[RMDB]
RNA sequence: GGGAACGACUCGAGUAGAGUCGAAAAACACGCUACGGCGACGCUCCCUGCUGGCCGAGGUGUAUUCGGGACGCACCGGUGUGUCGGAGGUGUGCGACGCCAACCCCUACCUGCUGCGCGCCGCAAACACUCCUCCGAGGUUCGCCUCGGAGGAGUGAAAAGAAACAACAACAACAAC
Reactivity to 2A3 in 0.01 (KOAc 150mM, MgCl2 10mM, bicine 150mM(pH8.5), 24C), signal-to-noise 3, nucleotides 027 to 126: a000c060a010c040g020c050u120a040c130g030g010c030g010a050c010g010c010u010c000c000c010u110g270c010u000g010g000c000c010g040a090g030g020u040g020u030a160u060u160c070g040g020g080a040c090g010c000a000c000c000g090g130u220g020u060g010u030c030g090g050a050g050g000u140g020u050g120c000g010a020c010g060c020c000a010a000c000c000c000c000u030a080c000c000u040g010c000u060g010c010g010c020g000c000c000g000c010a000a020a020